[RMDB]
RNA sequence: GGGAACGACUCGAGUAGAGUCGAAAAGAUAUGGAGCCUAGGAACCGCAGCUGAUUUGUCAGAAUCAGACUCGGAAACGAGUCUAGAUUCUUGGAUUUAAUCAGCUGCGAAACUAGGCUCCUAAGUCGUCUAUCAAUAUGUUCGCAUAUUGAUAGACAAAAGAAACAACAACAACAAC
Reactivity to 2A3 in 0.01 (KOAc 150mM, MgCl2 10mM, bicine 150mM(pH8.5), 24C), signal-to-noise 1, nucleotides 027 to 126: g070a020u140a090u300g020g000a010g000c000c000u010a000g050g040a120a070c110c020g000c000a000g000c000u000g020a000u000u010u050g020u030c020a010g010a000a000u010c000a000g000a010c010u010c000g000g040a020a020a020c000g000a010g000u000c000u080a080g000a000u000u000c010u000u160g080g000a020u260u250u300a000a020u000c010a000g000c000u000g000c010g000a000a000a000c000u000a000g000g000c000u000c000c010u000a010a010g010u010c060
Reactivity to DMS in 0.01 (KOAc 150mM, MgCl2 10mM, bicine 150mM(pH8.5), 24C), signal-to-noise 3, nucleotides 027 to 126: g030a100u000a300u000g020g020a010g020c010c000u010a010g010g020a150a200c300c030g020c000a010g010c000u010g000a000u010u000u000g010u000c000a050g000a030a010u000c010a020g010a010c010u000c000g000g020a110a140a250c010g010a030g010u000c000u000a080g000a000u000u000c000u000u010g040g010a020u000u010u000a000a010u000c000a000g000c000u000g000c000g000a000a030a300c010u010a030g000g010c000u000c000c000u000a010a050g000u000c110